The record gives the reactivity of an RNA of 177 nucleotides to DMS and 2A3. Source: RMDB library TTRDES, as collected in RNAgym. The 2A3 profile rests on 2,432 reads. 2A3 adducts were read by reverse transcription with SuperScript II with manganese.
[RMDB]
RNA sequence: GGGAACGACUCGAGUAGAGUCGAAAAGAUAUGGACGCAGGUAGGACAUGCUCGGCGGAUCGGAAACGAUCCCGAGAGCAACAGCCUACUGCGUCCUAAGUCAAACGCGUAUGUUCGCAUACGCGAAGAACCGGCUAUUGUUCGCAAUAGCCGGUUCAAAAGAAACAACAACAACAAC
Reactivity to DMS in 0.01 (KOAc 150mM, MgCl2 10mM, bicine 150mM(pH8.5), 24C), signal-to-noise 1, nucleotides 027 to 126: g020a000u010a180u000g000g000a020c000g020c000a050g040g000u010a010g000g000a050c100a230u010g050c030u000c000g020g030c300g020g010a010u000c000g020g000a020a040a110c000g000a000u010c000c000c000g020a220g000a000g000c000a020a050c230a230g000c020c000u010a030c000u000g000c010g000u000c000c000u000a000a070g000u000c010a130a120a240c030g020c020g020u000a010u010g010u010u020c160g000c000a030u000a000c000g000c020g010a050a160
Reactivity to 2A3 in 0.01 (KOAc 150mM, MgCl2 10mM, bicine 150mM(pH8.5), 24C), signal-to-noise 2, nucleotides 027 to 126: g020a010u030a010u080g010g000a020c020g020c000a000g200g190u100a020g040g020a080c150a300u300g030c020u030c000g060g090c300g080g020a000u010c020g000g010a010a010a010c000g000a000u000c010c000c000g120a150g000a000g040c010a020a080c060a030g060c000c000u010a000c000u010g000c000g010u020c000c020u010a000a010g010u000c000a040a040a060c030g000c000g000u000a000u040g000u070u100c210g010c200a020u020a010c070g000c000g010a030a000